[RMDB]
RNA sequence: GGGAACGACUCGAGUAGAGUCGAAAACUGCACCAUUCUUUAAUCAAUGAGUGACUGGAGGGGAAAAGGAAAGCGAGAAAGAAACAUCGAAUAACGUCCUCAUACUAAGUUUGCUUGUAUUUUGUAGUAAAACCCUCAUGUUCGCAUGAGGGUUUUAAAAAGAAACAACAACAACAAC
Reactivity to DMS in 0.01 (KOAc 150mM, MgCl2 10mM, bicine 150mM(pH8.5), 24C), signal-to-noise 4, nucleotides 027 to 126: c040u020g000c050a090c060c010a070u020u010c080u010u040u030a170a140u020c180a060a050u000g000a060g000u020g000a070c090u010g010g000a050g000g000g030g000a030a040a070a080g030g010a050a090a090g000c050g000a040g000a070a070a050g010a100a070a100c160a040u000c020g000a030a030u000a080a150c140g020u010c030c010u000c090a110u030a110c100u010a050a050g010u030u000u020g000c130u000u000g010u010a130u000u010u000u010g020u030a120g010

Structure probing data (DMS) for a 177-nucleotide construct. Reactivities are rounded to 0.1 and cut off at 0 and 3. Conditions: 150 mM KOAc, 10 mM MgCl2 and 150 mM bicine (pH 8.5), 24 C.